[RMDB]
Conditions: 150 mM KOAc, 10 mM MgCl2 and 150 mM bicine (pH 8.5), 24 C. Structure probing data (DMS and 2A3) for a 177-nucleotide construct. The DMS profile rests on 2,753 reads. For 2A3 the reverse transcriptase was SuperScript II with manganese. For 2A3, 4,609 sequencing reads were counted. High 2A3 reactivity points to a flexible backbone, as in loops and unpaired stretches.
RNA sequence: GGGAACGACUCGAGUAGAGUCGAAAAGAUAUGGACCAUGGUUUGUCGCAUACUAGCUCGGAAACGAGCACAGUAUGAACUACGAUGAUCAUGGUCCUAAGUCAAAAGAGGUUGUUCGCAACCUCAAGUAUAGGUCUACCUUCGGGUAGACCUAUACAAAAGAAACAACAACAACAAC
Reactivity to DMS in 0.01 (KOAc 150mM, MgCl2 10mM, bicine 150mM(pH8.5), 24C), signal-to-noise 3, nucleotides 027 to 126: g000a040u000a300u000g010g010a020c000c000a000u000g000g020u010u000u020g040u000c030g010c000a030u000a000c000u010a110g020c000u000c000g010g000a140a080a250c030g000a010g010c000a030c180a010g010u000a010u010g010a090a070c130u020a300c040g020a020u010g010a010u000c000a000u000g000g010u020c000c000u000a000a070g000u000c030a060a050a070a080g000a020g010g000u000u000g000u000u010c190g010c040a020a010c000c000u000c000a020a070
Reactivity to 2A3 in 0.01 (KOAc 150mM, MgCl2 10mM, bicine 150mM(pH8.5), 24C), signal-to-noise 2, nucleotides 027 to 126: g030a000u100a030u170g000g020a000c000c000a010u000g000g110u020u100u300g020u040c020g010c030a000u000a020c000u020a030g000c000u000c010g000g000a090a120a060c010g000a000g030c060a010c000a020g040u000a000u030g030a020a030c070u210a080c150g010a030u040g010a020u030c000a020u000g000g000u000c000c000u000a020a010g000u000c020a000a000a030a090g020a000g000g010u010u010g040u080u170c210g020c160a020a000c000c000u010c000a010a030